[RMDB]
RNA sequence: GGGAACGACUCGAGUAGAGUCGAAAACUUUAACAUCAUGAGUGUGUCCUUAAAUCCAUUCAAAUCGUUGGUAAACCUGGUAGUUUUGUCUAUUAUGGAUGAGAAUAGAGAACUGUAUUCUGACUCACGUGGAGAUAUUGUUCGCAAUAUCUCCACGAAAAGAAACAACAACAACAAC
Reactivity to DMS in 0.01 (KOAc 150mM, MgCl2 10mM, bicine 150mM(pH8.5), 24C), signal-to-noise 2, nucleotides 027 to 126: c050u010u010u010a070a080c130a040u010c110a070u000g010a060g030u000g000u010g010u010c010c040u000u010a060a120a120u000c010c030a050u000u000c100a040a100a090u010c140g010u010u000g000g020u000a070a100a110c050c010u000g010g020u010a020g000u010u030u010u000g020u000c020u000a070u000u000a070u000g010g000a060u000g000a130g010a050a040u020a050g000a100g000a070a050c120u000g000u000a210u010u010c010u000g030a160c140u000c070a140
Reactivity to 2A3 in 0.01 (KOAc 150mM, MgCl2 10mM, bicine 150mM(pH8.5), 24C), signal-to-noise 1, nucleotides 027 to 126: c000u060u070u270a090a030c060a070u180c010a040u060g030a030g010u030g000u000g010u030c000c000u020u050a050a110a020u000c010c010a000u000u190c030a100a020a120u140c040g070u060u050g060g010u040a020a020a100c030c040u030g140g050u020a060g050u000u060u130u030g050u040c000u030a090u100u030a060u170g050g000a020u060g040a010g030a070a040u120a030g070a000g010a070a020c040u050g020u130a220u120u000c030u080g040a040c010u040c030a050
About this RNA
The data come from the RNA Mapping Database (RMDB), library OK2TRN. Chemical mapping of a 177-nucleotide RNA with DMS and 2A3. The DMS profile rests on 1,704 reads. The 2A3 profile rests on 773 reads.